[RMDB]
RNA sequence: GGGAACGACUCGAGUAGAGUCGAAAAAGCUCCAGCACCACCAUUUUUGCGUCAUCCCGCAGGGACGGCUCAUCAGAGUUAAAAUACCGGCCGUAAGUGCCGUUGGCAGUGUACUGGUCAAGCAGCAUAUGACCCUACGUUUCGACGUAGGGUCAUAAAAAGAAACAACAACAACAAC
Reactivity to DMS in 0.01 (KOAc 150mM, MgCl2 10mM, bicine 150mM(pH8.5), 24C), signal-to-noise 1, nucleotides 027 to 126: a140g000c040u000c030c040a020g000c040a010c010c110a090c040c060a080u000u000u000u000u000g020c150g000u000c030a050u000c030c030c000g010c120a040g040g010g010a060c060g040g000c020u010c010a090u010c080a060g010a080g010u030u000a060a080a110a140u020a090c140c030g000g020c000c020g020u000a040a210g010u010g010c020c010g000u000u000g010g020c020a070g050u000g000u000a050c040u000g000g010u040c080a020a080g020c090a070g010c100a170
Description: Chemical mapping of a 177-nucleotide RNA with DMS. DMS adducts were read by reverse transcription with MarathonRT. The RNA was probed in 150 mM KOAc, 10 mM MgCl2 and 150 mM bicine (pH 8.5) at 24 C.